[RMDB]
RNA sequence: GGGAACGACUCGAGUAGAGUCGAAAAUGGAGCAGUAUCUUACACUGAAUUCAUAGGUGUAUGAAGGCACACCCGGGGAACUGAAACAUCUAAGUACCCGGAGGAAGAGAAAGCAAACGCGAUUUCCUGUACAUAUGGAAUUCGUUCCAUAUGUACAAAAAGAAACAACAACAACAAC
Reactivity to 2A3 in 0.01 (KOAc 150mM, MgCl2 10mM, bicine 150mM(pH8.5), 24C), signal-to-noise 5, nucleotides 027 to 126: u120g040g020a080g000c020a030g060u100a060u080c010u000u030a000c010a000c010u020g040a070a060u110u090c020a020u050a080g000g020u010g010u030a020u040g040a050a040g080g000c020a010c000a010c030c010c000g000g010g000g000a040a010c010u010g040a110a120a090c080a130u070c030u050a030a000g000u010a010c010c000c020g000g020a030g010g010a060a060g030a010g040a090a080a000g010c040a100a080a040c080g010c010g060a060u020u030u000c000c000
Reactivity to DMS in 0.01 (KOAc 150mM, MgCl2 10mM, bicine 150mM(pH8.5), 24C), signal-to-noise 9, nucleotides 027 to 126: u000g020g010a140g030c030a100g010u010a100u000c020u000u000a030c040a020c020u000g010a160a190u000u010c100a040u000a300g010g010u000g010u010a020u000g010a070a090g010g000c050a090c070a150c120c000c010g000g010g010g000a120a100c120u000g000a100a100a150c190a070u000c060u000a040a070g020u000a150c010c010c010g010g000a060g000g010a080a110g010a110g000a070a070a100g000c040a040a070a100c140g010c040g010a110u000u000u000c010c030